[RMDB]
RNA sequence: GGGAACGACUCGAGUAGAGUCGAAAAGAUAUGGAGGUAUGUGUCCGAAGAACUUAUAACAAUGAAUUGACAUUAUCGGAAACGAUAAUGUCAAUUCUAUAUAAGGGAGGACUGUACCUCCUAAGUCCAUUCACGUACAGUUCGCUGUACGUGAAUGAAAAGAAACAACAACAACAAC
Reactivity to DMS in 0.01 (KOAc 150mM, MgCl2 10mM, bicine 150mM(pH8.5), 24C), signal-to-noise 2, nucleotides 027 to 126: g010a060u000a300u010g000g010a030g000g010u030a010u010g000u020g000u000c010c000g000a110a140g010a230a220c020u000u000a000u010a040a140c300a130a130u010g000a020a010u000u010g010a030c000a030u010u000a000u000c000g020g000a160a080a260c020g010a000u000a030a000u000g000u000c000a000a000u000u000c000u010a040u000a010u000a000a000g000g000g010a070g000g020a030c000u010g000u010a000c010c000u000c000c000u000a010a080g000u000c040